RNA sequence: GGGAACGACUCGAGUAGAGUCGAAAACGGAGCACGGAAGUCGCCACGCCCCACGGCGUCUUUCAUCAGUUGUGGCCCGGGCUUGCCCGCCACCUGGGGCUGUGCGCCGGUGGCGGUUCGCAGCGCGCGGCAUUUAUGCUUUCGAGCAUAAAUGCCGAAAAGAAACAACAACAACAAC
Reactivity to 2A3 in 0.01 (KOAc 150mM, MgCl2 10mM, bicine 150mM(pH8.5), 24C), signal-to-noise 2, nucleotides 027 to 126: c050g040g020a070g060c060a010c080g060g000a020a000g020u030c000g020c010c000a020c040g090c020c010c000c010a000c030g000g000c000g020u010c000u010u040u000c060a150u060c070a060g070u080u090g010u100g020g060c010c020c000g020g020g020c010u070u160g000c010c020c000g000c000c000a020c000c050u220g030g000g020g000c050u130g150u160g050c180g040c040c010g000g000u000g000g000c000g000g000u010u070c050g020c010a000g000c020g000c000g010
Reactivity to DMS in 0.01 (KOAc 150mM, MgCl2 10mM, bicine 150mM(pH8.5), 24C), signal-to-noise 2, nucleotides 027 to 126: c040g000g000a140g030c060a180c090g000g000a020a030g030u020c000g000c020c000a300c100g000c000c000c000c000a250c180g000g030c000g010u000c000u010u020u000c000a140u040c100a130g010u010u010g000u010g010g000c000c000c000g000g020g010c000u020u030g000c090c000c010g030c000c000a010c000c010u050g070g000g000g020c000u040g000u080g020c010g020c020c000g000g020u000g010g030c000g000g000u000u000c060g000c020a000g000c000g050c120g000
About this RNA:
An RNA of 177 nucleotides, treated with 2A3 and DMS and read out base by base. For 2A3 the reverse transcriptase was SuperScript II with manganese. It was measured as part of the RMDB library OK1LIB. The 2A3 profile rests on 2,134 reads. The DMS profile rests on 3,760 reads. High 2A3 reactivity points to a flexible backbone, as in loops and unpaired stretches.